Annotation
An RNA of 177 nucleotides, treated with 2A3 and DMS and read out base by base. DMS adducts were read by reverse transcription with MarathonRT.
[RMDB]
RNA sequence: GGGAACGACUCGAGUAGAGUCGAAAAAGAAAGGAUACCGAAAGGUAUCCAAUUUGCACUUUGGAUUGCGGUAACCUCUCACGUGUGACGUUGAAGUAACUAUGUGCAGUAAUACCGCAAGAAAAAACCAGAUCAUGUACUUCGGUACAUGAUCUGGAAAAGAAACAACAACAACAAC
Reactivity to 2A3 in 0.01 (KOAc 150mM, MgCl2 10mM, bicine 150mM(pH8.5), 24C), signal-to-noise 1, nucleotides 027 to 126: a000g090a030a020a020g020g010a010u000a000c000c000g020a030a010a000g000g010u000a000u000c000c020a000a000u000u000u100g090c010a040c050u040u030u100g130g050a070u040u050g040c010g010g050u020a040a040c020c020u050c000u000c010a010c010g030u030g000u120g060a060c110g030u050u190g150a210a060g000u030a040a020c010u040a000u090g000u020g040c010a000g030u070a070a030u000a000c000c000g000c020a020a010g050a020a040a000a000a000a000
Reactivity to DMS in 0.01 (KOAc 150mM, MgCl2 10mM, bicine 150mM(pH8.5), 24C), signal-to-noise 1, nucleotides 027 to 126: a060g000a040a060a300g000g000a020u000a010c000c000g000a120a180a090g010g000u010a000u000c000c000a010a010u050u010u000g030c090a120c080u000u020u000g020g010a240u000u000g000c020g060g000u000a000a080c130c100u020c030u000c080a010c100g000u000g040u000g000a030c040g000u000u020g050a090a220g000u000a030a010c000u000a020u010g000u000g000c240a040g000u000a040a060u000a040c010c000g000c000a010a050g000a000a020a050a100a020a050
The RNA was probed in 150 mM KOAc, 10 mM MgCl2 and 150 mM bicine (pH 8.5) at 24 C.